The record gives the reactivity of an RNA of 177 nucleotides to 2A3 and DMS. Values cover nucleotides 27 to 126. For 2A3 the reverse transcriptase was SuperScript II with manganese.
RNA sequence: GGGAACGACUCGAGUAGAGUCGAAAAUCAAUUCGCACUAAAGAGGUUAUUAAAUACACUAUUCAUGGUGAUAAACCAGUGCCACAAUAUCCAUCUGAAUUCUAUCAAAAGAACCCUGGUCAAAAACAGUAUAAUAGAAAUUCGUUUCUAUUAUACUAAAAGAAACAACAACAACAAC
Reactivity to 2A3 in 0.01 (KOAc 150mM, MgCl2 10mM, bicine 150mM(pH8.5), 24C), signal-to-noise 7, nucleotides 027 to 126: u080c020a010a100u150u090c070g000c020a020c030u140a060a120a050g170a080g040g020u060u040a090u070u140a080a130a060u280a050c010a020c020u100a070u290u210c110a120u240g050g000u040g050a100u150a050a060a030c010c000a020g000u020g020c020c000a070c040a060a100u110a050u080c030c020a070u040c050u040g060a080a030u120u050c030u060a160u130c070a080a140a050a040g030a050a060c010c010c010u050g010g100u080c040a110a040a030a030a050c010
Reactivity to DMS in 0.01 (KOAc 150mM, MgCl2 10mM, bicine 150mM(pH8.5), 24C), signal-to-noise 2, nucleotides 027 to 126: u050c070a020a100u000u000c110g010c070a070c080u020a060a090a100g000a080g010g000u000u000a060u010u030a110a030a120u030a160c020a050c050u000a080u030u060c130a070u050g020g000u000g000a120u000a040a080a040c040c010a050g000u010g020c010c110a070c110a050a040u030a050u030c010c020a030u000c050u000g000a110a070u000u000c060u010a040u000c060a010a060a210a080g000a060a070c050c030c010u010g000g010u020c080a030a060a060a050a090c110